[RMDB]
RNA sequence: GGGAACGACUCGAGUAGAGUCGAAAAGUUGCAACUCACAGUCUGGGGCAUCAAGCAGCUCCAGGCAAGAGUCCUGGCUGUGGAAAGAUACCUACAGGAUCAACAGCUCCUGGGGAUUUGGGGCUGCGCGCUAAGCAAUAUUCGUAUUGCUUAGCGCAAAAGAAACAACAACAACAAC
Reactivity to DMS in 0.01 (KOAc 150mM, MgCl2 10mM, bicine 150mM(pH8.5), 24C), signal-to-noise 3, nucleotides 027 to 126: g010u000u030g000c150a050a080c030u030c000a060c120a210g020u030c000u000g000g020g020g000c040a130u030c130a090a240g040c170a090g000c050u010c040c020a030g000g020c030a080a130g000a100g000u010c050c020u010g020g000c000u010g000u000g020g010a050a090a110g010a050u000a100c010c010u010a080c040a000g010g000a110u000c060a060a150c130a080g000c110u020c000c010u010g030g030g000g020a090u000u020u010g010g000g010g020c020u000g020c190
Reactivity to 2A3 in 0.01 (KOAc 150mM, MgCl2 10mM, bicine 150mM(pH8.5), 24C), signal-to-noise 4, nucleotides 027 to 126: g110u100u120g050c030a040a030c020u020c010a040c020a040g010u000c010u030g000g000g000g000c010a100u050c150a280a120g070c100a010g010c000u020c000c010a000g010g000c000a000a010g010a010g000u000c000c010u050g010g000c030u050g020u080g070g050a080a130a050g030a060u210a200c010c000u080a180c030a010g030g020a050u050c030a050a060c010a030g010c020u010c000c020u070g020g020g020g040a050u100u020u080g000g000g000g020c000u010g010c030

An RNA of 177 nucleotides, treated with DMS and 2A3 and read out base by base. It was measured as part of the RMDB libraries RFM100 and RFMREP. For 2A3 the reverse transcriptase was SuperScript II with manganese. For DMS the reverse transcriptase was MarathonRT. The RNA was probed in 150 mM KOAc, 10 mM MgCl2 and 150 mM bicine (pH 8.5) at 24 C. Reactivities are given for positions 27 through 126.